[RMDB]
Conditions: 150 mM KOAc, 10 mM MgCl2 and 150 mM bicine (pH 8.5), 24 C. This 177-nucleotide RNA was probed chemically with DMS. Reactivities are given for positions 27 through 126. It was measured as part of the RMDB library VIROID.
RNA sequence: GGGAACGACUCGAGUAGAGUCGAAAAGACAGGAGUAAUUCCUGCUGAAACAGGGUUUUCACCCUUCCUUUCUUCAGGUUUCCUUCCUCGCGCCCGCAGGAUCACCCCUCGCCCCCUUGCGCUGUCGCUACUUAAUCCCGUUCGCGGGAUUAAGUAGAAAAGAAACAACAACAACAAC
Reactivity to DMS in 0.01 (KOAc 150mM, MgCl2 10mM, bicine 150mM(pH8.5), 24C), signal-to-noise 1, nucleotides 027 to 126: g010a130c120a020g020g000a020g000u000a040a060u010u010c000c000u000g010c020u000g010a030a010a030c100a030g000g000g010u000u000u010u000c190a100c010c000c000u000u010c030c010u000u000u000c000u000u000c020a030g000g020u000u010u000c010c000u000u000c010c010u000c060g010c150g020c030c020c020g000c040a050g000g020a080u010c050a080c060c030c000c010u000c020g020c020c000c000c010c010u010u010g010c020g010c050u000g010u000c060g010